[RMDB]
RNA sequence: GGGAACGACUCGAGUAGAGUCGAAAACAGGUCGGUUUCCGGUUCCAGCGAGUACGGCACGUGCAGUGUCGAGCACGACGUCGAGACGGCCACGGUAGCCGCCGAACCCAGCAGGGUCGCCAACGUGGGGCCUGAGUGCAUUCGUGCACUCAGGCCCAAAAGAAACAACAACAACAAC
Reactivity to 2A3 in 0.01 (KOAc 150mM, MgCl2 10mM, bicine 150mM(pH8.5), 24C), signal-to-noise 1, nucleotides 027 to 126: c030a000g000g180u170c010g040g000u040u040u160c010c000g000g000u290u000c060c010a030g000c050g040a070g000u030a000c010g000g000c070a010c000g030u160g130c050a100g010u000g100u300c180g000a000g020c040a000c000g090a070c000g000u000c000g000a010g030a090c060g000g010c000c000a000c000g060g000u120a030g000c000c000g000c000c000g110a190a130c000c030c000a050g010c050a150g000g110g000u000c070g180c010c000a010a010c110g070u300g000
Structure probing data (2A3) for a 177-nucleotide construct.
It was measured as part of the RMDB library OK1LIB.
For 2A3, 324 sequencing reads were counted.